The data come from the RNA Mapping Database (RMDB), library M2PK50. An RNA of 177 nucleotides, treated with DMS and 2A3 and read out base by base. The reactions ran in a buffer of 150 mM KOAc, 10 mM MgCl2 and 150 mM bicine (pH 8.5), at 24 C. 2A3 adducts were read by reverse transcription with SuperScript II with manganese. For DMS the reverse transcriptase was MarathonRT.
[RMDB]
RNA sequence: GGGAACGACUCGAGUAGAGUCGAAAAAGGAUAGGAUUCGUCCUAUCCUACACCAAAACCUCCUGGCGGUGCGGCGCCGGCCCCGCCGGGAUGGCCGCCUUAUUGGUAGCUGGUUCGCCAGCUACAACUACAACUCACAAUUCGUUGUGAGUUGUAGAAAAGAAACAACAACAACAAC
Reactivity to DMS in 0.01 (KOAc 150mM, MgCl2 10mM, bicine 150mM(pH8.5), 24C), signal-to-noise 6, nucleotides 027 to 126: a020g000g000a010u000a000g020g010a040u000u010c200g010u000c000c000u000a010u000c000c000u000a020c130a190c030c040a080a050a120a210c020c020u000c010c000u000g000g010c020g010g000u000g010c050g030g010c040g020c080c070g000g000c030c080c050c020g020c000c010g020g000g000a020u000g030g020c080c100g010c080c070u000u000a120u010u000g010g010u000a000g010c000u000g000g000u000u010c220g020c000c000a010g000c000u000a000c010a050a180
Reactivity to 2A3 in 0.01 (KOAc 150mM, MgCl2 10mM, bicine 150mM(pH8.5), 24C), signal-to-noise 6, nucleotides 027 to 126: a000g000g000a000u010a000g000g000a010u030u070c190g050u020c060c000u000a000u000c000c000u000a010c020a030c000c000a040a040a060a090c010c000u010c000c010u000g000g000c010g000g020u030g040c060g090g040c070g070c060c030g070g000c000c010c010c010g000c000c000g000g000g010a020u050g010g010c040c030g090c020c030u210u260a250u120u210g130g000u000a000g000c000u010g000g050u040u040c220g030c060c000a000g000c000u000a000c000a000a000